[RMDB]
Chemical mapping of a 177-nucleotide RNA with DMS and 2A3. The RNA was probed in 150 mM KOAc, 10 mM MgCl2 and 150 mM bicine (pH 8.5) at 24 C.
RNA sequence: GGGAACGACUCGAGUAGAGUCGAAAAAAUAAACCGCUGAUGUUGUUUAAGUUAUUAUUUUGCCAAUCGGACUUUUGGCGAAAUCUCAUACUGUAAAACACCCAAUACGCAAUCAAUUCAACAGCCAUAUUAGAUGAGUCUUCGGACUCAUCUAAUAAAAAGAAACAACAACAACAAC
Reactivity to DMS in 0.01 (KOAc 150mM, MgCl2 10mM, bicine 150mM(pH8.5), 24C), signal-to-noise 1, nucleotides 027 to 126: a120a110u030a060a140a020c050c020g000c090u010g020a020u000g030u000u000g000u010u000u010a060a070g000u000u030a070u000u000a050u010u010u000u020g000c050c010a000a020u010c200g000g010a160c190u000u000u000u000g000g000c010g020a000a000a030u000c240u030c100a070u000a010c040u030g030u050a050a020a140a060c070a040c020c020c020a070a160u030a080c030g000c050a160a090u000c060a010a090u020u010c040a040a010c060a000g000c050c040a130
Reactivity to 2A3 in 0.01 (KOAc 150mM, MgCl2 10mM, bicine 150mM(pH8.5), 24C), signal-to-noise 1, nucleotides 027 to 126: a000a000u140a020a060a040c030c060g060c030u040g010a020u050g000u080u000g010u010u010u190a070a050g020u000u000a030u010u010a000u000u010u020u000g010c000c000a020a020u090c080g020g030a150c210u010u020u020u010g000g000c000g000a000a000a080u000c060u000c040a050u050a080c060u050g080u160a000a000a080a000c080a080c030c020c010a000a080u150a070c070g030c060a080a140u120c060a000a070u290u160c030a000a040c000a040g080c000c030a050